[RMDB]
RNA sequence: GGGAACGACUCGAGUAGAGUCGAAAAGACCGCUGAAUGCGGAAGUACUAGAUCAACUAGAAAGUAGAUUAAUACAAAAGCUACGUCUCGAAACUAGUUGAUCUAGUGCACUCGAGACGUAGCAAGACCACCCUCCUCACUUCGGUGAGGAGGGUGGAAAAGAAACAACAACAACAAC
Reactivity to 2A3 in 0.01 (KOAc 150mM, MgCl2 10mM, bicine 150mM(pH8.5), 24C), signal-to-noise 1, nucleotides 027 to 126: g020a000c010c000g140c000u000g130a060a160u300g030c030g000g000a040a040g140u000a040c000u000a000g040a000u040c000a000a000c110u140a140g150a230a110a000g110u180a050g100a150u050u300a240a070u260a260c060a030a030a030a030g000c000u000a000c000g000u000c000u000c000g030a000a040a050c060u060a030g000u030u000g000a000u000c000u000a000g000u000g000c000a000c170u000c000g000a050g000a000c000g000u010a050g060c090a000a000g030a000
The record gives the reactivity of an RNA of 177 nucleotides to 2A3. High 2A3 reactivity points to a flexible backbone, as in loops and unpaired stretches. It was measured as part of the RMDB library OK1LIB. Values cover nucleotides 27 to 126.